Chemical mapping of a 177-nucleotide RNA with 2A3. 2A3 adducts were read by reverse transcription with SuperScript II with manganese. It was measured as part of the RMDB library OK1LIB. 2A3 is a SHAPE reagent: it acylates the 2'-hydroxyl of flexible nucleotides of all four kinds.
[RMDB]
RNA sequence: GGGAACGACUCGAGUAGAGUCGAAAAAAGGGUAAUAAAGGUACCAGAAAAUGGUAGCAAUAAUGAUAUUCGUUGCGGUAAGAAAUUUCUUCUACUGCAUUUUCUUAUUGCAUACAAUCUGAAAUGCCCCGUCAUCGUGGUUCGCCACGAUGACGGGAAAAGAAACAACAACAACAAC
Reactivity to 2A3 in 0.01 (KOAc 150mM, MgCl2 10mM, bicine 150mM(pH8.5), 24C), signal-to-noise 2, nucleotides 027 to 126: a000a000g130g050g050u180a050a050u050a040a160a000g110g030u040a130c030c060a000g110a000a180a000a000u080g090g000u000a000g000c020a000a000u000a000a040u120g110a050u070a080u070u110c190g090u070u060g040c050g000g030u080a060a200g170a040a050a000u300u300u010c030u050u010c000u080a000c030u000g010c000a000u000u000u000u000c000u000u000a000u000u000g000c000a020u040a150c000a000a080u000c010u020g070a300a000a000u050g000c000